[RMDB]
RNA sequence: GGGAACGACUCGAGUAGAGUCGAAAAGACGGUAGGUCAGUAUGCCCCGAAUAUCCCGGGCUACACGCGGGCUACAAUGGAUAGGACAAUGGGUAACUACACCGAAAGGUGGCGUCAAUCUCUUAAAGUGUGCUUACGUUUUCGAACGUAAGCACACAAAAGAAACAACAACAACAAC
Reactivity to DMS in 0.01 (KOAc 150mM, MgCl2 10mM, bicine 150mM(pH8.5), 24C), signal-to-noise 1, nucleotides 027 to 126: g060a030c080g000g020u070a030g020g020u000c040a150g000u020a000u000g010c020c000c000c140g000a040a190u000a160u000c030c100c150g020g030g010c100u000a070c040a220c140g000c070g000g000g000c020u000a020c110a200a020u000g000g000a020u010a020g020g000a060c200a110a090u000g000g000g050u020a000a000c010u020a140c050a080c050c090g000a140a090a090g000g000u000g000g010c030g000u000c160a000a200u020c000u020c000u010u000a020a010a150
Reactivity to 2A3 in 0.01 (KOAc 150mM, MgCl2 10mM, bicine 150mM(pH8.5), 24C), signal-to-noise 2, nucleotides 027 to 126: g060a030c010g050g120u130a150g060g120u050c030a020g000u080a040u200g010c100c060c000c020g040a040a070u150a060u040c010c000c050g010g040g010c000u000a050c040a020c050g060c070g000g030g030c010u090a060c070a000a060u120g000g090a050u050a010g020g030a020c020a060a030u040g030g000g000u000a020a020c010u060a030c020a010c020c010g000a070a020a020g020g010u020g000g030c000g010u040c030a050a090u030c040u000c000u030u300a030a150a060